[RMDB]
This 170-nucleotide RNA was probed chemically with 2A3. Reactivities are given for positions 27 through 129. The 2A3 profile rests on 1,562 reads. 2A3 adducts were read by reverse transcription with SuperScript II with manganese. The RNA was probed in 150 mM KOAc, 10 mM MgCl2 and 150 mM bicine (pH 8.5) at 24 C.
RNA sequence: GGGAACGACUCGAGUAGAGUCGAAAAUUCUCUCUAUUCUUUCUUGAAAGAGGAGACUGCUGGACCAAACGCCCGAGCCGGGAUGGGCCGCAUACCGAGCGAAGGAUACCGGUAAGGGGAGAGGAGGACGGGUGACCCUUCGGGGUCACCAAAAGAAACAACAACAACAAC
Reactivity to 2A3 in 0.01 (KOAc 150mM, MgCl2 10mM, bicine 150mM(pH8.5), 24C), signal-to-noise 1, nucleotides 027 to 129: u030u040c000u000c000u000c000u000a010u210u020c000u000u190u030c010u010u070g110a000a050a000g100a000g010g000a000g010a000c030u090g000c000u120g090g050a040c000c040a160a040a150c170g050c000c000c000g000a000g020c000c060g020g020g010a010u100g030g280g000c020c000g010c000a130u070a080c000c000g000a000g000c000g010a040a000g050g000a000u010a090c000c000g070g000u130a040a050g000g000g000g010a020g000a000g100g020a000g050g000a000c020g000